Record summary: This 177-nucleotide RNA was probed chemically with DMS and 2A3. 2A3 adducts were read by reverse transcription with SuperScript II with manganese. High DMS reactivity at an A or C suggests that its Watson-Crick edge is free. Source: RMDB library TTRDES, as collected in RNAgym.
[RMDB]
RNA sequence: GGGAACGACUCGAGUAGAGUCGAAAAGAUAUGGAUUGGUUGGGAGCGAUAAGUUUCAUCUCGGAAACGAGAUAGAACUUUUGACGCUUAGACCAAUCCUAAGUCAAAAGGGAAGUUCGCUUCCCAAGAACAUUUUAAACUUCGGUUUAAAAUGUUCAAAAGAAACAACAACAACAAC
Reactivity to DMS in 0.01 (KOAc 150mM, MgCl2 10mM, bicine 150mM(pH8.5), 24C), signal-to-noise 3, nucleotides 027 to 126: g000a040u010a300u010g000g000a020u000u000g000g010u000u000g020g000g000a010g000c010g000a120u000a020a010g010u010u000u000c050a040u000c000u000c000g000g000a090a110a210c010g020a010g020a010u000a030g000a020a010c000u000u000u000u010g020a200c090g010c000u000u000a300g000a010c010c000a000a010u010c000c000u000a000a090g010u010c030a070a090a100a200g010g010g010a010a010g020u010u020c300g000c010u000u010c000c000c000a030a080
Reactivity to 2A3 in 0.01 (KOAc 150mM, MgCl2 10mM, bicine 150mM(pH8.5), 24C), signal-to-noise 2, nucleotides 027 to 126: g020a010u070a010u120g000g000a020u020u040g030g050u070u040g300g300g090a010g000c040g050a050u040a160a010g010u030u110u140c010a000u000c010u000c000g030g000a070a080a050c020g010a010g000a010u020a060g020a000a000c000u130u040u010u080g180a120c080g000c000u000u000a010g000a000c000c000a000a000u020c000c000u000a020a000g020u010c010a000a000a140a100g010g000g000a020a000g020u090u160c160g080c090u000u030c000c000c000a010a020